[RMDB]
RNA sequence: GGGAACGACUCGAGUAGAGUCGAAAAUGUCUUUGUUGCUUAAUGACGAACCAUACAUCAUGACGUUGGCUCUAUGUUCUCCAACAUUAACUUUGACUCUCUUCAAUAGCGGUUCUUUGGAGCGCGCUCGCGCAUCUACAUUCGUGUAGAUGCGCGAAAAAGAAACAACAACAACAAC
Reactivity to DMS in 0.01 (KOAc 150mM, MgCl2 10mM, bicine 150mM(pH8.5), 24C), signal-to-noise 2, nucleotides 027 to 126: u010g010u000c030u000u000u020g020u000u000g010c100u000u000a050a060u010g010a120c100g000a090a100c060c030a050u000a070c050a050u010c090a070u010g010a040c090g010u010u010g000g000c010u000c010u000a110u010g000u010u000c050u000c050c040a060a060c110a080u000u000a040a070c110u000u000u000g000a060c060u000c010u000c060u000u000c090a040a100u020a030g010c030g010g000u000u000c040u000u000u010g010g000a050g010c050g010c080g020c090
Reactivity to 2A3 in 0.01 (KOAc 150mM, MgCl2 10mM, bicine 150mM(pH8.5), 24C), signal-to-noise 2, nucleotides 027 to 126: u050g020u010c040u000u080u060g090u100u040g050c060u100u240a090a060u170g060a030c080g030a040a030c020c000a020u060a110c030a040u090c020a070u100g060a030c030g000u040u020g020g000c000u000c020u030a050u120g000u000u000c070u000c020c000a050a020c000a050u130u110a090a030c020u010u040u100g070a090c010u000c010u010c050u120u030c060a090a100u020a140g080c060g010g050u020u010c000u070u110u140g100g000a020g020c100g000c020g000c040
About this RNA: The data come from the RNA Mapping Database (RMDB), library OK2TST. This 177-nucleotide RNA was probed chemically with DMS and 2A3. The reactions ran in a buffer of 150 mM KOAc, 10 mM MgCl2 and 150 mM bicine (pH 8.5), at 24 C. Reactivities are given for positions 27 through 126. For DMS, 2,095 sequencing reads were counted. DMS adducts were read by reverse transcription with MarathonRT.